[RMDB]
RNA sequence: GGGAACGACUCGAGUAGAGUCGAAAAAAGUCAUCAUCUUGCAUUGAUUACGUCCCUGCCCUUUGUACACACCGCCCGUCGCACCUACCGAUUGGAUAUUGUGACGAACCUUGCAGAGUGAGUUCUACAAUGGACUAUCCUUCGGGAUAGUCCAUUGAAAAGAAACAACAACAACAAC
Reactivity to 2A3 in 0.01 (KOAc 150mM, MgCl2 10mM, bicine 150mM(pH8.5), 24C), signal-to-noise 5, nucleotides 027 to 126: a000a000g050u050c030a060u010c000a000u010c050u100u140g020c050a050u060u120g060a050u070u040a020c040g050u050c010c010c000u010g020c010c000c000u040u080u140g070u090a010c050a000c000a000c040c010g010c010c010c010g020u000c010g000c000a030c000c010u060a090c010c020g130a120u040u150g020g000a020u040a050u090u140g060u030g010a000c030g010a010a030c010c020u030u070g020c040a030g040a010g140u050g040a070g030u040u000c000u000a040
Reactivity to DMS in 0.01 (KOAc 150mM, MgCl2 10mM, bicine 150mM(pH8.5), 24C), signal-to-noise 4, nucleotides 027 to 126: a050a050g020u000c050a050u000c050a040u010c070u000u020g000c110a060u030u010g000a070u010u010a050c090g010u010c010c010c000u000g000c020c010c020u000u000u000g000u000a050c080a050c060a060c070c040g020c030c030c020g010u000c030g030c060a040c050c050u010a090c060c040g000a090u020u020g010g000a060u000a080u020u000g010u020g020a090c060g000a040a070c070c030u010u010g000c050a030g010a090g000u010g010a110g010u000u000c020u000a130